Overview:
An RNA of 207 nucleotides, treated with 2A3 and read out base by base. High 2A3 reactivity points to a flexible backbone, as in loops and unpaired stretches. The data come from the RNA Mapping Database (RMDB), library M2RFPK. Values are in units of 0.01, from 0 to 300, in steps of 10. Conditions: 150 mM KOAc, 10 mM MgCl2 and 150 mM bicine (pH 8.5), 24 C.

[RMDB]
RNA sequence: GGGAACGACUCGAGUAGAGUCGAAAAUUGGCGAAUGCCUGUGGAUCUACAUUUGUUGCGGGUUCGAGACCCGUCAGAGCCCGGCUCUGUAGCUCAAUGGUAGAGCGGUGUAUUCACAUAAACUUUUAAAAGACACGUGCCUUCGGGCACGUGUCAAGGACUAGAAUACCUUCGGGUAUUCUAGUCCAAAAGAAACAACAACAACAAC
Reactivity to 2A3 in 0.01 (KOAc 150mM, MgCl2 10mM, bicine 150mM(pH8.5), 24C), signal-to-noise 1, nucleotides 027 to 156: u070u040g000g000c080g080a300a060u300g000c010c040u040g000u000g000g020a050u050c050u110a010c010a010u050u090u100g020u000u010g000c020g000g000g000u020u000c020g000a010g000a040c000c000c010g000u000c000a000g000a000g010c160c240c150g060g000c030u000c000u010g010u010a020g010c010u000c030a030a000u190g210g070u120a010g000a000g000c000g000g000u000g000u000a010u030u020c010a020c000a000u220a040a130a080c040u090u170u000u160a070a210a040a000g000a000c000a000c000g000u000g000c060c000u080u040c190g030g000g000c000a000c000g000u000g000u000c010a000a000